An RNA of 177 nucleotides, treated with 2A3 and DMS and read out base by base. Conditions: 150 mM KOAc, 10 mM MgCl2 and 150 mM bicine (pH 8.5), 24 C. For 2A3, 1,247 sequencing reads were counted.
RNA sequence: GGGAACGACUCGAGUAGAGUCGAAAAGGGGCAUACUUAUUAAAUAUCGGUUUAAUCCACAGGAACUGAAGGCUCUGAGGCAAUACAAACUAGCAUAAUUCAGCUGACUUAUUAUUUGAGCUUAGAACAGCUGUAAGAGAUUCGUCUCUUACAGCUGAAAAGAAACAACAACAACAAC
Reactivity to 2A3 in 0.01 (KOAc 150mM, MgCl2 10mM, bicine 150mM(pH8.5), 24C), signal-to-noise 2, nucleotides 027 to 126: g030g000g000g030c040a010u050a110c030u080u130a070u270u170a220a180a120u210a100u100c040g010g000u030u010u060a060a020u060c040c000a040c010a050g090g020a000a020c010u030g070a100a020g040g000c000u010c040u050g070a080g020g010c020a030a000u170a060c050a060a170a000c050u080a040g000c020a030u060a140a090u150u130c040a020g010c020u030g020a040c020u140u080a030u120u000a130u060u230u100g060a030g030c000u040u060a080g050a160a010
Reactivity to DMS in 0.01 (KOAc 150mM, MgCl2 10mM, bicine 150mM(pH8.5), 24C), signal-to-noise 2, nucleotides 027 to 126: g000g000g010g020c070a050u000a040c040u010u000a090u000u000a070a110a130u000a100u010c060g010g000u000u000u000a100a060u000c050c030a030c060a090g020g000a100a050c030u000g000a060a080g010g010c070u010c040u000g000a100g000g000c050a050a060u000a050c100a060a040a070c100u000a060g000c000a020u000a070a090u000u010c140a070g010c060u020g010a090c060u000u010a060u000u000a130u000u010u000g010a060g000c060u000u010a080g000a070a140
DMS adducts were read by reverse transcription with MarathonRT.